[RMDB]
RNA sequence: GGGAACGACUCGAGUAGAGUCGAAAAUUAUACUGGUAGCCGUGAUGAGAAUGUCUUAUCUCAGAAAUUGCCAAUGUCUUUAAUUCAUGAAGGUGUUGGUGAGGUCGUAUUUGACAGUAAAGGUGUGACGUGAUAAUGCAUUCGUGCAUUAUCACGUAAAAGAAACAACAACAACAAC
Reactivity to DMS in 0.01 (KOAc 150mM, MgCl2 10mM, bicine 150mM(pH8.5), 24C), signal-to-noise 4, nucleotides 027 to 126: u010u030a100u030a080c050u020g000g010u010a080g020c020c000g030u010g010a120u020g000a040g020a090a110u010g000u010c050u010u030a040u010c050u010c030a080g020a070a050a110u000u000g000c000c000a010a010u000g000u010c000u000u000u000a050a120u040u070c300a070u010g000a020a010g010g010u000g030u000u010g010g010u010g000a010g000g000u010c020g000u010a070u010u020u010g010a030c030a040g010u000a040a120a090g000g010u010g000u010g000
Reactivity to 2A3 in 0.01 (KOAc 150mM, MgCl2 10mM, bicine 150mM(pH8.5), 24C), signal-to-noise 5, nucleotides 027 to 126: u090u040a100u030a100c070u050g090g030u070a040g010c030c010g040u040g040a080u060g000a030g000a100a090u150g080u080c040u040u060a070u120c050u050c100a020g030a060a100a070u080u100g010c020c000a020a000u010g020u020c000u030u110u080a240a290u180u280c140a130u300g020a000a010g010g020u000g000u030u000g000g030u020g000a030g020g060u010c020g020u050a150u060u050u100g040a020c020a000g040u090a000a100a080g090g000u090g060u080g050